[RMDB]
RNA sequence: GGGAACGACUCGAGUAGAGUCGAAAAGAUAUGGAACGAUCGCAAGGCGUCGUGUGUCGGAAACGACAUCUUCGCUGAUGACCGAGUCGUUCCUAAGUCAAAACCCGGAGUGUUCGCACUCCGGGAAGAUAUGGAGGUUGUUCGCAACCUCCAUAUCAAAAGAAACAACAACAACAAC
Reactivity to 2A3 in 0.01 (KOAc 150mM, MgCl2 10mM, bicine 150mM(pH8.5), 24C), signal-to-noise 3, nucleotides 027 to 126: g040a040u210a120u300g100g070a160a060c080g000a040u070c010g010c150a080a110g040g000c020g010u010c000g000u050g000u000g000u300c000g010g030a050a120a080c010g000a000c000a000u000c010u020u010c000g000c020u050g060a100u280g030a010c030c000g020a010g060u020c020g000u000u000c000c000u000a000a000g040u020c040a030a050a110a160c030c000c000g000g010a020g000u040g010u060u290c270g060c140a000c010u000c000c000g000g000g000a000a000
Reactivity to DMS in 0.01 (KOAc 150mM, MgCl2 10mM, bicine 150mM(pH8.5), 24C), signal-to-noise 2, nucleotides 027 to 126: g010a060u000a060u020g010g030a100a080c050g000a040u000c020g000c140a100a180g000g000c010g020u000c000g000u030g010u000g010u010c000g000g000a100a080a180c000g010a010c010a000u000c020u000u000c010g020c010u000g020a180u020g000a050c150c000g000a010g010u000c010g010u000u000c010c000u010a010a050g020u010c090a100a080a130a080c000c000c010g000g010a030g020u010g000u000u000c270g020c010a000c000u000c000c000g000g010g010a000a010